[RMDB]
RNA sequence: GGGAACGACUCGAGUAGAGUCGAAAAGGGCGGCCUUUCGAGGCCGCCCAAUGGAAGCCAAGCCGAAAGGCAUUUUAAUCCUUGGCUGGCGAAAGCCUAAAAAACGGAUCUUGUUCGCAAGAUCCAAGUAUGUGAAUUCAUUCGUGAAUUCACAUACAAAAGAAACAACAACAACAAC
Reactivity to DMS in 0.01 (KOAc 150mM, MgCl2 10mM, bicine 150mM(pH8.5), 24C), signal-to-noise 2, nucleotides 027 to 126: g000g020g100c020g080g040c000c000u000u000u020c140g020a020g040g000c000c030g010c010c000c000a000a030u000g010g000a150a130g010c000c010a030a110g020c000c000g000a070a080a050g000g020c300a060u010u000u000u010a190a070u000c010c000u010u000g010g000c000u000g000g000c010g000a100a110a090g010c010c000u000a000a060a030a070a080a070c200g010g000a020u000c000u000u000g000u010u040c180g010c010a000a020g010a010u000c000c000a020a040
Reactivity to 2A3 in 0.01 (KOAc 150mM, MgCl2 10mM, bicine 150mM(pH8.5), 24C), signal-to-noise 1, nucleotides 027 to 126: g000g050g050c000g000g080c020c030u050u040u100c250g090a000g010g070c060c000g020c000c000c000a000a000u020g000g020a020a000g000c000c000a040a030g010c020c020g180a150a060a010g010g000c020a020u050u020u020u090a070a070u060c000c000u020u060g010g000c000u020g000g000c030g040a060a000a020g010c000c020u110a050a060a000a030a020a020c100g000g000a000u010c010u000u000g010u070u080c170g010c080a000a000g000a000u000c000c000a010a000